Chemical mapping of a 170-nucleotide RNA with 2A3 and DMS. For 2A3, 7,726 sequencing reads were counted. It was measured as part of the RMDB library 15KLIB. 2A3 adducts were read by reverse transcription with SuperScript II with manganese.
RNA sequence: GGGAACGACUCGAGUAGAGUCGAAAAUUGCUAAGGGUGAUAGCUGUUCUUCUAAUUGCAAACAUUCAGUUGCUCAGUUGGUUAGUUACCUUUCUGAACGCUGUAAUGUUAUUGCUGAUUCUAAGUCGACGGAGGUUGUUCGCAACCUCCAAAAGAAACAACAACAACAAC
Reactivity to 2A3 in 0.01 (KOAc 150mM, MgCl2 10mM, bicine 150mM(pH8.5), 24C), signal-to-noise 5, nucleotides 027 to 129: u080u060g000c020u040a030a040g100g020g030u090g070a100u080a030g000c020u010g060u090u010c020u100u020c030u090a050a080u110u070g000c000a030a010a010c000a010u020u000c010a000g020u110u160g210c000u010c000a020g000u010u020g010g010u020u040a070g010u060u140a040c000c000u010u110u160c000u000g000a020a020c020g000c000u020g070u300a000a000u010g000u030u020a120u030u050g030c010u040g080a050u030u020c050u100a060a090g100u040c020g030a090c050
Reactivity to DMS in 0.01 (KOAc 150mM, MgCl2 10mM, bicine 150mM(pH8.5), 24C), signal-to-noise 3, nucleotides 027 to 129: u080u050g020c000u020a110a110g030g000g060u000g040a110u010a040g030c030u080g010u000u000c040u000u030c060u050a110a070u000u000g040c000a020a060a080c040a030u000u000c030a060g040u040u090g110c090u000c030a020g010u050u010g000g030u030u010a170g020u040u080a100c000c030u000u000u000c020u000g000a020a010c040g040c030u030g020u070a070a020u020g000u010u000a090u020u030g040c030u080g040a070u040u030c000u020a120a050g040u020c030g000a060c190